[RMDB]
RNA sequence: GGGAACGACUCGAGUAGAGUCGAAAAGCAGGCUUCGGCCUGCCCGAAUCCUAAGUCUGGUGUUGAGCAUUGUCAGCUCGAGGUAUCGGAAACGAUACUACCCACCGAGUUAAUGCAAUGAUGCACCAGAUAUGGACCAAGUCCACUUCGGUGGAAAUACUGUUUUAUGCUUCGGCAUAAAACAGUAAAAAGAAACAACAACAACAAC
Reactivity to 2A3 in 0.01 (KOAc 150mM, MgCl2 10mM, bicine 150mM(pH8.5), 24C), signal-to-noise 5, nucleotides 027 to 156: g000c000a000g030g020c020u100u250c300g130g000c000c000u000g000c000c010c010g110a060a070u040c010c010u060a210a030g020u000c010u000g010g000u010g030u020u050g060a040g020c000a010u000u000g090u190c090a060g020c050u010c010g020a030g030g010u010a000u010c000g020g010a080a030a030c000g000a000u010a010c010u050a070c060c080c010a060c040c000g000a010g000u030u130a240a080u210g000c000a020a030u020g000a020u150g000c000a000c010c000a000g000a000u000a000u010g010g000a010c020c060a110a020g060u000c000c000a000c000u050u080c260g070g000u020g000g000a010a020a050
Reactivity to DMS in 0.01 (KOAc 150mM, MgCl2 10mM, bicine 150mM(pH8.5), 24C), signal-to-noise 2, nucleotides 027 to 156: g030c000a020g070g030c030u000u010c300g070g020c070c030u010g000c010c010c020g020a120a120u000c010c020u000a060a260g000u000c000u010g020g030u010g050u000u020g000a080g020c040a030u000u010g000u020c300a200g000c000u000c020g000a080g030g000u000a010u000c000g000g000a230a120a290c020g000a040u000a000c030u000a020c010c020c000a300c120c000g000a040g010u000u010a040a070u000g020c000a040a060u010g010a040u020g000c000a020c010c010a000g040a000u000a190u020g010g000a090c070c050a040a170g020u000c020c010a020c020u000u020c190g020g020u000g000g000a030a100a150
About this RNA: The record gives the reactivity of an RNA of 207 nucleotides to 2A3 and DMS. As a SHAPE reagent, 2A3 marks flexible, mostly unpaired nucleotides at the ribose 2'-OH. The DMS profile rests on 3,704 reads. Reactivities are given for positions 27 through 156. The 2A3 profile rests on 6,006 reads. The RNA was probed in 150 mM KOAc, 10 mM MgCl2 and 150 mM bicine (pH 8.5) at 24 C. It was measured as part of the RMDB library RNAMAK.